[RMDB]
RNA sequence: GGGAACGACUCGAGUAGAGUCGAAAAUCAUGAGUUCGCUCAUGAAAAAAUCCUAAGUCUUUCUGCCACAAGGGCGAUAAGUACAUCGGAAACGAUGUACUUUUGACGCCUAGUUGUGGCAAGAAAGAUAUGGAAAAAACUGUGAUUCGUCACAGAAUCUAAGAGUCAUAUUCGUAUGACUCUUAGAAAAAGAAACAACAACAACAAC
Reactivity to 2A3 in 0.01 (KOAc 150mM, MgCl2 10mM, bicine 150mM(pH8.5), 24C), signal-to-noise 3, nucleotides 027 to 156: u020c000a000u000g000a010g020u020u090c180g090c060u020c010a010u020g010a110a010a010a000a000a040u070c030c010u060a140a010g000u000c000u000u000u010c000u010g000c000c000a000c000a040a020g020g000g010c000g010a020u010a050a000g000u000a000c010a000u010c010g050g060a090a050a060c000g000a000u000g000u000a000c000u000u000u000u020g020a010c010g000c000c000u050a090g040u020u020g000u010g000g000c000a010a000g000a000a000a010g000a000u030a050u020g020g060a070a000a020a080a030a030c010u040g000u030g010a010u040u070c150g040u030c120a010c000a000g030a030a060
Reactivity to DMS in 0.01 (KOAc 150mM, MgCl2 10mM, bicine 150mM(pH8.5), 24C), signal-to-noise 2, nucleotides 027 to 156: u000c010a000u000g020a010g050u000u000c300g020c010u000c000a020u000g000a000a030a130a100a090a110u000c010c000u000a060a260g010u000c000u000u000u000c020u000g010c020c010a020c020a050a170g010g010g020c000g010a100u000a020a010g040u020a010c000a010u030c010g020g000a190a120a300c020g020a000u010g040u000a000c000u000u000u010u010g010a180c080g020c010c000u000a070g010u000u000g000u000g010g000c000a010a020g010a020a020a000g010a020u000a150u000g000g020a000a060a070a080a060a070c010u000g020u000g010a090u000u000c220g010u000c010a030c000a030g000a160a110